[RMDB]
RNA sequence: GGGAACGACUCGAGUAGAGUCGAAAAGAGACAGAGUCUUGCUGUGUUGCCCAGGCUGGACUGCAGUUGUGCAAUCUUGGCUCACUGUAACCUCUGCCUCCUGGAUUCAAGCAAUUCUCAUGCUUCAGCCUCCCGAGUAGCUGGGACUACAGGUGCAUGAUAUUCAGCCGUUCGCGGCUGAAUAUCAAAAAGAAACAACAACAACAAC
Reactivity to 2A3 in 0.01 (KOAc 150mM, MgCl2 10mM, bicine 150mM(pH8.5), 24C), signal-to-noise 1, nucleotides 027 to 156: g000a000g010a020c000a030g020a000g020u040c040u070u020g010c010u100g020u020g060u200u170g000c000c000c020a020g000g050c040u030g010g060a120c070u030g000c040a030g060u300u300g020u030g020c000a030a140u070c070u190u200g060g000c000u010c000a010c010u000g020u100a060a090c050c040u050c020u060g000c000c000u010c000c000u050g090g040a170u130u000c010a000a000g020c010a020a150u060u020c050u030c010a100u050g030c010u030u020c060a010g030c000c020u050c010c000c020g070a070g000u090a010g000c070u230g030g050g080a080c010u040a010c020a010g010g080u030g070c010a000
The record gives the reactivity of an RNA of 207 nucleotides to 2A3. It was measured as part of the RMDB library OK3TST.